[RMDB]
RNA sequence: GGGAACGACUCGAGUAGAGUCGAAAAUUGUCUGCGUGAGUAUGAGAAGCGGGUCGAGGACGCAUGGUUAUCUCGUUAACGAUCCAUGCAAAAAAUAAGUGCCAAUUCCAAGAGCACUGUCUCGGCCAAGGCCGACUUCGCCCUCGCGGCGUAAGUUCUGUAUCUGUCUGUUCGCAGACAGAUACAGAAAAGAAACAACAACAACAAC
Reactivity to 2A3 in 0.01 (KOAc 150mM, MgCl2 10mM, bicine 150mM(pH8.5), 24C), signal-to-noise 1, nucleotides 027 to 156: u050u050g100u010c020u050g010c000g010u080g010a090g020u150a060u180g050a050g030a150a050g030c010g000g000g050u000c000g000a010g070g030a000c030g010c010a000u000g060g000u000u240a050u120c040u000c100g110u130u150a120a050c050g010a000u070c000c000a000u000g000c000a030a020a030a030a030a030u100a010a000g000u000g000c030c000a050a280u220u040c080c060a130a040g030a030g030c000a020c000u000g050u020c020u000c000g000g000c000c000a010a000g090g000c000c000g050a120c050u010u010c030g020c000c000c000u050c050g010c110g020g000c030g010u020a040a030g010u000u000
Chemical mapping of a 207-nucleotide RNA with 2A3.
2A3 adducts were read by reverse transcription with SuperScript II with manganese.
Values cover nucleotides 27 to 156.
The data come from the RNA Mapping Database (RMDB), library RSTRND.
The reactions ran in a buffer of 150 mM KOAc, 10 mM MgCl2 and 150 mM bicine (pH 8.5), at 24 C.